[RMDB]
RNA sequence: GGGAACGACUCGAGUAGAGUCGAAAAAGAAUCGAACUAGCUCUCGAUUUGGAAGUUAGCAACCUAAUCUUGAGCGAAAUUACUUGUUAACUAUGAGCGUAGAUAUUUAUGUGAUUGGAUAAUUUGGACAUGGGUUCGACUCCCAUCUACUCCAUAUCGUAAAUAAGGAGUUCGCUCCUUAUUUACGAAAAGAAACAACAACAACAAC
Reactivity to DMS in 0.01 (KOAc 150mM, MgCl2 10mM, bicine 150mM(pH8.5), 24C), signal-to-noise 2, nucleotides 027 to 156: a100g010a070a020u000c050g000a030a060c000u000a220g000c060u020c020u000c130g010a070u000u000u000g010g020a120a170g010u000u000a090g000c070a080a170c020c010u000a050a020u000c030u000u000g010a050g040c040g000a090a050a100u000u000a080c070u000u000g000u000u000a040a070c000u000a080u000g000a300g000c050g070u010a020g000a150u000a050u000u000u000a030u000g020u010g020a240u000u000g010g000a150u000a030a060u060u000u020g030g010a100c140a040u010g030g020g000u010u000c030g030a200c080u000c010c000c000a100u000c080u000a070c040u040c000c030a060u000a150u000
Reactivity to 2A3 in 0.01 (KOAc 150mM, MgCl2 10mM, bicine 150mM(pH8.5), 24C), signal-to-noise 6, nucleotides 027 to 156: a000g050a030a050u060c020g010a020a030c020u010a050g000c000u000c000u000c010g000a000u010u040u030g010g030a100a050g070u180u250a070g090c040a040a080c010c010u030a000a000u000c000u000u010g010a000g000c010g010a020a030a000u070u040a040c030u040u040g010u060u050a050a040c020u020a040u100g040a020g020c030g020u030a030g050a160u090a180u150u230u060a050u130g080u050g050a070u020u090g030g020a030u030a150a070u160u030u100g020g020a010c040a080u040g060g000g000u010u040c010g010a020c040u020c010c010c000a020u020c040u070a080c030u000c030c010a050u060a050u100
Annotation
This 207-nucleotide RNA was probed chemically with DMS and 2A3.